[RMDB]
RNA sequence: GGGAACGACUCGAGUAGAGUCGAAAAACUCCACUACUACGGUAGUGGAGAAACAGUUACGCCGUUUGUAGCUGUAAAGCCCACGGUUGUGGGGCGUAUCAACAGGUAGAAGGAAUAUAUCGAUGAACCUGUGAUUCUUGUUCGCAAGAAUCACAGGAAAAGAAACAACAACAACAAC
Reactivity to 2A3 in 0.01 (KOAc 150mM, MgCl2 10mM, bicine 150mM(pH8.5), 24C), signal-to-noise 2, nucleotides 027 to 126: a000c000u000c000c000a010c000u000a000c000u000a000c280g100g000u020a010g000u060g020g000a000g000a000a040a000c030a000g000u040u040a030c030g110c050c170g020u030u230u210g000u030a020g000c010u000g000u080a190a000a000g060c000c010c000a040c030g130g000u110u090g000u070g000g000g000g000c020g040u130a070u200c120a160a100c020a070g010g040u030a030g060a180a110g040g040a040a110u180a070u060a040u200c120g030a110u060g000a010a040
Reactivity to DMS in 0.01 (KOAc 150mM, MgCl2 10mM, bicine 150mM(pH8.5), 24C), signal-to-noise 1, nucleotides 027 to 126: a140c000u000c000c000a000c000u000a050c000u000a120c200g030g020u010a000g000u000g010g060a000g000a000a000a030c040a010g030u000u010a010c030g050c220c150g000u020u050u010g000u000a000g000c000u000g030u000a050a080a110g000c000c000c020a050c160g050g060u000u000g000u010g000g000g000g000c110g000u000a020u000c100a060a050c160a170g010g000u000a000g000a150a100g010g020a180a060u060a130u030a130u000c010g000a060u010g030a190a230